[RMDB]
RNA sequence: GGGAACGACUCGAGUAGAGUCGAAAAGCACAAUGGGAGGAAGCCUGAUGCAGCGACGCAGCGUGAGGGAUGAAGGCCUUCGGGUUGUAAACCUCCUUCAGCAGGGACGAUGCGUGAGUGCCGGUACAAUAAUAUAGUAAUUCGUUACUAUAUUAUUAAAAGAAACAACAACAACAAC
Reactivity to DMS in 0.01 (KOAc 150mM, MgCl2 10mM, bicine 150mM(pH8.5), 24C), signal-to-noise 9, nucleotides 027 to 126: g000c050a060c090a090a080u020g010g010g000a070g000g010a100a080g000c030c000u010g000a020u000g000c010a030g010c020g010a030c020g000c010a030g010c020g010u000g010a010g010g000g000a020u030g010a230a300g000g000c040c010u000u050c120g010g000g010u000u000g010u000a020a300a300c030c010u000c000c030u010u010c060a080g010c070a060g000g010g000a060c050g000a080u020g000c030g010u010g010a100g010u010g010c030c040g000g010u030a080c170
Reactivity to 2A3 in 0.01 (KOAc 150mM, MgCl2 10mM, bicine 150mM(pH8.5), 24C), signal-to-noise 6, nucleotides 027 to 126: g040c010a010c020a060a100u090g020g000g000a040g020g020a050a010g040c000c010u040g020a030u050g020c030a020g020c010g020a010c020g010c030a020g010c020g050u060g010a010g010g020g000a010u300g010a030a000g000g000c000c000u020u030c080g050g000g000u000u030g010u020a010a000a000c000c000u010c000c000u030u030c020a030g000c020a000g030g000g000a010c020g030a050u070g010c020g020u080g050a050g030u060g010c020c010g030g020u090a030c040